[RMDB]
RNA sequence: GGGAACGACUCGAGUAGAGUCGAAAAACAGUGGUUAGUCGGCCUGACCGGUCACCCGUGCUUUCCUUGCGCGCCAUUGGCGCCGCCGAUCCCGUCGGGCACACCGACGCCGCCAGGUCCGCCGGUGCGGAGACACACUGUUCGCAGUGUGUCUCCGAAAAGAAACAACAACAACAAC
Reactivity to 2A3 in 0.01 (KOAc 150mM, MgCl2 10mM, bicine 150mM(pH8.5), 24C), signal-to-noise 1, nucleotides 027 to 126: a000c070a040g070u110g000g100u140u120a060g060u070c060g050g000c000c000u090g050a080c030c030g040g020u070c100a100c030c040c000g030u060g040c000u130u110u090c020c000u080u120g060c070g010c010g000c040c010a200u130u300g000g010c020g030c020c020g050c000c010g010a070u060c060c010c000g030u040c030g000g000g050c070a040c000a020c180c000g060a000c010g000c020c000g030c010c060a050g000g050u010c010c010g040c040c000g040g010u060g000
Reactivity to DMS in 0.01 (KOAc 150mM, MgCl2 10mM, bicine 150mM(pH8.5), 24C), signal-to-noise 2, nucleotides 027 to 126: a110c070a120g030u010g000g010u010u000a030g000u010c040g000g000c020c050u000g020a090c070c030g000g010u000c120a080c060c040c040g010u000g010c030u000u000u000c030c020u000u010g030c070g040c040g010c010c040a180u010u010g020g010c020g020c040c070g040c040c110g000a070u010c050c050c020g050u000c030g010g000g010c200a130c120a070c040c020g000a030c030g030c070c040g030c100c040a050g000g000u010c070c070g000c040c040g040g000u020g010

This 177-nucleotide RNA was probed chemically with 2A3 and DMS. It was measured as part of the RMDB library OK2TST. DMS adducts were read by reverse transcription with MarathonRT.